[RMDB]
RNA sequence: GGGAACGACUCGAGUAGAGUCGAAAAGAUGCUUGGAGUGUUCGUACCUGGCGCAAGCCAGGGCAAGUGAGGCGCAAGCCUCGCUGACGGCGUGGAAAGGGCUCUCUCUGAGGCCCGAGUACGCUGAACUGUGAGGGGAAUUCGUUCCCCUCACAGUAAAAGAAACAACAACAACAAC
Reactivity to DMS in 0.01 (KOAc 150mM, MgCl2 10mM, bicine 150mM(pH8.5), 24C), signal-to-noise 4, nucleotides 027 to 126: g020a060u010g010c100u000u000g020g000a180g000u010g020u000u000c040g010u010a140c000c000u010g000g000c000g020c240a110a130g000c010c010a010g010g000g000c120a050a020g020u000g000a020g000g010c020g000c270a100a140g020c000c000u000c000g010c010u010g000a210c070g000g000c060g030u000g010g000a060a170a220g000g000g000c000u060c010u000c020u050c130u040g000a020g010g000c000c000c010g010a050g020u010a040c010g000c020u010g000a140
Reactivity to 2A3 in 0.01 (KOAc 150mM, MgCl2 10mM, bicine 150mM(pH8.5), 24C), signal-to-noise 3, nucleotides 027 to 126: g050a000u080g010c060u050u120g050g010a080g020u060g060u080u070c040g020u050a150c010c000u010g000g020c010g000c070a100a020g000c000c010a000g010g000g000c000a040a030g000u000g000a000g000g000c010g000c030a050a010g000c000c000u010c010g030c020u030g030a040c030g010g020c020g030u040g010g040a060a070a050g010g000g000c020u010c000u000c010u020c120u300g020a010g030g010c000c000c000g000a000g020u000a010c000g000c030u040g040a060